[RMDB]
RNA sequence: GGGAACGACUCGAGUAGAGUCGAAAACAUGCGCGUCCGAAGUAUGGUCUGCAUACGUAGUCACGGGCCCUUCCGCUCUUUUGUGUGAAUCUCGAAUUCUAAAUCUUACGAUUGAGCCUCGGCGCGGUCUACUGAGCCUGUUCGCGGGUUCGGUAGAAAAAGAAACAACAACAACAAC
Reactivity to 2A3 in 0.01 (KOAc 150mM, MgCl2 10mM, bicine 150mM(pH8.5), 24C), signal-to-noise 9, nucleotides 027 to 126: c050a040u150g020c010g000c010g060u100c020c010g020a070a010g060u080a080u150g020g030u060c040u060g040c050a040u070a170c070g130u110a030g070u090c050a010c070g000g010g000c000c000c010u070u030c030c020g010c000u000c010u000u020u020u010g030u000g010u010g020a030a030u020c040u030c130g050a100a060u080u000c020u070a070a060a120u040c030u060u120a020c020g020a030u010u030g010a010g000c000c010u020c010g000g000c010g000c000g000g010
Reactivity to DMS in 0.01 (KOAc 150mM, MgCl2 10mM, bicine 150mM(pH8.5), 24C), signal-to-noise 9, nucleotides 027 to 126: c080a080u030g010c020g010c010g010u040c010c020g010a060a120g010u010a040u010g010g010u020c030u010g000c090a100u020a080c110g010u020a070g010u010c110a180c050g000g000g000c020c020c070u010u000c080c120g010c020u000c020u000u000u010u000g010u000g010u010g000a030a040u000c040u030c180g000a080a070u010u010c040u010a060a080a080u030c090u020u030a050c040g000a020u000u000g000a050g000c030c080u000c030g000g000c010g010c010g000g000
The record gives the reactivity of an RNA of 177 nucleotides to 2A3 and DMS. It was measured as part of the RMDB library OK1LIB. For DMS, 104,221 sequencing reads were counted.